The record gives the reactivity of an RNA of 177 nucleotides to DMS and 2A3. The data come from the RNA Mapping Database (RMDB), library OK2TST. DMS adducts were read by reverse transcription with MarathonRT. 2A3 is a SHAPE reagent: it acylates the 2'-hydroxyl of flexible nucleotides of all four kinds. Conditions: 150 mM KOAc, 10 mM MgCl2 and 150 mM bicine (pH 8.5), 24 C. Reactivities are rounded to 0.1 and cut off at 0 and 3.
RNA sequence: GGGAACGACUCGAGUAGAGUCGAAAAUCGGGUAGGUAGACCAGGCGAAGGGCGUCGGAUUCGAUACCACGUCGAAGGUGUAGUUCAAUAUCGUUGCGCAGUUCGCCGCUGACCGACAUGUCCGCGGACCACUAGUACUAUUCGUAGUACUAGUGGUAAAAGAAACAACAACAACAAC
Reactivity to DMS in 0.01 (KOAc 150mM, MgCl2 10mM, bicine 150mM(pH8.5), 24C), signal-to-noise 9, nucleotides 027 to 126: u000c030g010g010g010u010a110g010g010u000a070g010a120c150c130a150g010g010c020g010a040a040g010g000g010c010g020u000c150g010g000a080u000u000c130g010a050u010a060c090c040a050c060g010u000c150g010a100a100g000g010u000g010u000a090g010u000u000c070a050a060u000a060u000c040g000u010u000g010c020g010c030a050g010u000u000c020g010c000c010g000c050u000g000a100c010c030g010a040c170a090u000g010u000c010c020g000c120g000g000
Reactivity to 2A3 in 0.01 (KOAc 150mM, MgCl2 10mM, bicine 150mM(pH8.5), 24C), signal-to-noise 9, nucleotides 027 to 126: u050c010g010g010g040u170a020g010g030u050a040g110a200c060c060a050g020g000c010g020a010a030g170g010g000c010g020u070c040g040g030a040u050u050c050g010a010u040a090c030c030a040c070g160u170c110g110a100a050g090g010u040g020u060a080g030u050u080c050a050a040u070a070u170c060g080u120u180g000c020g000c020a100g080u030u020c010g000c000c010g000c010u010g020a030c000c000g030a030c020a090u140g030u000c020c020g120c060g120g020